Chemical mapping of a 177-nucleotide RNA with 2A3 and DMS. It was measured as part of the RMDB library OK2TST. For DMS the reverse transcriptase was MarathonRT. The reactions ran in a buffer of 150 mM KOAc, 10 mM MgCl2 and 150 mM bicine (pH 8.5), at 24 C. For 2A3 the reverse transcriptase was SuperScript II with manganese.
RNA sequence: GGGAACGACUCGAGUAGAGUCGAAAACUUAUCUCCCUCUCUCCUUCUCUCAUGCACACAAAGGAAUGGCCAUGUGAGGCCCCAGUGAGAAGAGUAGACUCAUAAAAGGUGUUGGGAGUCACCUCGGCCCUACAGCUACGUUCGCGUAGCUGUAGGGAAAAGAAACAACAACAACAAC
Reactivity to 2A3 in 0.01 (KOAc 150mM, MgCl2 10mM, bicine 150mM(pH8.5), 24C), signal-to-noise 1, nucleotides 027 to 126: c020u120u080a090u150c050u020c010c020c060u020c030u000c000u010c000c060u060u030c010u000c000u000c010a050u100g000c090a030c010a020c040a100a140a020g050g030a190a170u160g050g000c020c000a050u150g120u130g180a110g020g000c000c000c010c010a020g050u020g010a030g000a090a000g010a000g010u070a010g020a040c030u000c080a090u210a150a120a010a020g000g050u030g020u110u050g070g000g000a050g030u040c000a000c000c000u030c060g130g020
Reactivity to DMS in 0.01 (KOAc 150mM, MgCl2 10mM, bicine 150mM(pH8.5), 24C), signal-to-noise 2, nucleotides 027 to 126: c110u000u000a050u020c080u000c000c000c000u000c060u000c020u000c020c010u000u010c000u010c030u010c040a080u000g020c120a090c110a050c120a090a110a140g010g030a140a080u010g030g010c040c010a120u020g020u010g010a150g030g000c000c030c030c030a080g030u000g010a050g020a030a070g010a080g030u040a100g000a050c130u000c130a060u010a020a080a130a080g010g030u000g010u020u000g010g010g020a040g020u010c090a050c020c000u010c160g010g000